[RMDB]
RNA sequence: GGGAACGACUCGAGUAGAGUCGAAAAGAUGAAAAAUGUUGAUCUUCACAUUCAAGACGUUCAGUGAACUCCAUAUAGGAGAAAUUCAAGAGAUCCACAAUUAGACAUAUGCUACUCAAACUGUCAAGAGACAGAGACAAAUAGAAUCUUGAAAGUACCUAUGAUCCUCCUUCGGGAGGAUCAUAGGAAAAGAAACAACAACAACAAC
Reactivity to 2A3 in 0.01 (KOAc 150mM, MgCl2 10mM, bicine 150mM(pH8.5), 24C), signal-to-noise 1, nucleotides 027 to 156: g090a050u170g060a010a000a000a100a150u070g010u030u040g010a040u000c000u010u020c040a010c010a150u120u060c060a090a030g070a050c010g030u020u050c060a000g020u050g130a110a080c000u010c000c000a090u140a000u100a300g030g030a040g030a000a100a070u100u030c010a080a040g020a010g020a020u010c090c030a000c000a040a030u110u060a030g000a000c000a000u180a040u120g020c030u060a050c000u000c140a000a030a300c010u040g010u010c020a040a010g120a000g010a100c040a020g030a000g010a020c050a010a040a020u120a100g050a010a090u150c000u210u220g000a070a040a170g010u110a030
Source: RMDB library OK3TST, as collected in RNAgym. An RNA of 207 nucleotides, treated with 2A3 and read out base by base. The reactions ran in a buffer of 150 mM KOAc, 10 mM MgCl2 and 150 mM bicine (pH 8.5), at 24 C. The 2A3 profile rests on 430 reads.